[RMDB]
RNA sequence: GGGAACGACUCGAGUAGAGUCGAAAAGACACUAGUAGCCCUACUCUGGCAACACAGACAUGGAAAUCAGUUGCCUAAGGAAAGAUCAUAUUGGCUAAGAGAGUCCCUUGAAUGCUCCCUUUUAGUGUUACGAGUAGAUGAACAAUGCCGCAGGUUACAUUUUAAUCGAUUUCGAUCGAUUAAAAUGAAAAGAAACAACAACAACAAC
Reactivity to 2A3 in 0.01 (KOAc 150mM, MgCl2 10mM, bicine 150mM(pH8.5), 24C), signal-to-noise 4, nucleotides 027 to 156: g040a000c030a010c060u060a030g100u050a030g030c010c000c000u020a040c030u020c030u030g000g010c010a020a000c030a010c050a070g070a070c060a120u230g090g130a070a100a080u080c020a040g000u020u000g000c000c000u030a020a010g020g030a090a070a010g030a010u090c030a000u100a110u230u120g020g010c010u040a090a010g040a000g000a020g130u030c010c010c000u020u080g090a090a020u090g010c000u030c000c000c000u050u050u030u100a060g010u070g040u080u060a020c050g000a000g020u070a040g040a080u090g010a040a030c020a070a060u130g040c040c030g040c050a020g050g020u040u060a020
Reactivity to DMS in 0.01 (KOAc 150mM, MgCl2 10mM, bicine 150mM(pH8.5), 24C), signal-to-noise 3, nucleotides 027 to 156: g010a080c050a070c050u000a090g020u000a110g020c030c020c030u000a120c030u000c020u000g010g030c010a010a040c010a200c100a160g000a030c070a150u010g030g000a090a100a110u000c020a120g000u010u000g020c000c010u000a020a040g020g000a080a060a110g000a100u000c040a140u010a130u000u000g040g040c020u000a060a130g000a120g000a090g000u000c020c030c030u000u000g000a100a090u000g020c040u000c000c000c010u000u000u000u000a040g020u000g010u000u000a060c060g010a130g020u000a070g020a070u000g000a110a090c060a050a070u000g010c020c030g000c040a080g010g000u000u000a160